[RMDB]
RNA sequence: GGGAACGACUCGAGUAGAGUCGAAAAGCUGAUGUGACAUCUGAUUUCUACGUGCGCAGUGAGCCAAAACAGCUGCUGUUUGCUAUGGAAAAAGUGGCGCCAAUCGAGAUUUUUGAGACCCUAGGCUCUAAAUACGUUUCUUCGGAAACGUAUUUAGAAAAGAAACAACAACAACAAC
Reactivity to 2A3 in 0.01 (KOAc 150mM, MgCl2 10mM, bicine 150mM(pH8.5), 24C), signal-to-noise 8, nucleotides 027 to 126: g040c030u030g010a060u070g050u040g040a020c010a050u070c020u040g070a160u020u060u000c010u040a050c060g080u090g050c030g000c020a020g010u080g220a020g020c010c040a060a110a080a110c050a030g000c000u020g000c010u010g030u050u090u110g000c000u040a070u160g040g010a050a030a010a010a010g020u030g030g000c020g000c020c010a010a040u030c040g030a010g010a130u020u030u060u090u170g090a090g020a040c010c010c000u030a040g080g000c010u000
Reactivity to DMS in 0.01 (KOAc 150mM, MgCl2 10mM, bicine 150mM(pH8.5), 24C), signal-to-noise 6, nucleotides 027 to 126: g010c040u010g000a040u000g010u010g020a080c060a040u000c040u000g020a190u000u000u000c030u000a110c160g010u010g010c090g010c010a030g030u010g010a060g000c020c040a070a050a090a100c260a150g000c010u010g000c030u010g010u010u010u020g010c000u010a110u010g000g000a040a050a050a120a070g010u010g010g000c010g020c030c080a040a070u010c050g000a080g010a080u000u000u010u000u020g000a110g000a120c010c000c020u000a120g020g000c080u000